[RMDB]
RNA sequence: GGGAACGACUCGAGUAGAGUCGAAAAGAGUACAUAUGCCCAGCCUUACUGUCUCGGCUGGAUGCUUCGUGCAAAUGCUAUGUACGCCUACGUAUAUGUGCGUAGAUGCCUAUAUUUUCUCUCCUGAGAAAAUAUAGAUGCAUACAAAGAGAAUGCACACUAAAAUAGCAUUCGUGCUAUUUUAGUGAAAAGAAACAACAACAACAAC
Reactivity to DMS in 0.01 (KOAc 150mM, MgCl2 10mM, bicine 150mM(pH8.5), 24C), signal-to-noise 6, nucleotides 027 to 156: g000a080g030u000a050c040a070u000a060u010g020c050c010c020a070g010c000c020u010u000a100c070u010g010u000c050u000c110g010g040c010u000g000g010a110u000g010c020u010u010c120g040u010g030c020a050a080a130u010g020c020u000a060u010g020u000a020c020g020c040c010u000a030c020g030u000a130u010a090u020g020u000g030c010g020u000a030g010a120u000g010c040c010u000a010u000a010u000u000u000u000c000u000c010u010c260c250u010g020a030g000a010a010a020a010u000a000u000a010g000a090u000g030c010a040u000a080c060a060a100a100g000a120g010a070a240u000g020c000a200
Reactivity to 2A3 in 0.01 (KOAc 150mM, MgCl2 10mM, bicine 150mM(pH8.5), 24C), signal-to-noise 9, nucleotides 027 to 156: g070a010g010u010a000c010a000u020a030u270g010c000c000c010a010g000c010c010u190u210a210c110u280g110u200c090u060c140g010g000c000u000g000g010a020u080g000c010u040u170c150g140u180g030c010a060a060a140u200g010c010u000a000u020g000u000a000c000g030c000c000u010a020c010g050u050a080u030a050u280g140u060g050c000g010u010a020g010a110u050g010c000c000u000a000u000a000u000u000u000u000c000u000c010u060c050c180u150g000a000g000a000a000a000a000u000a000u000a000g000a020u100g000c000a010u030a080c040a020a130a010g080a010g050a090a040u100g020c030a010

Description
Chemical mapping of a 207-nucleotide RNA with DMS and 2A3. In probing experiments dimethyl sulfate is read out at A N1 and C N3, which are open when not base-paired. Source: RMDB library OK3TST, as collected in RNAgym.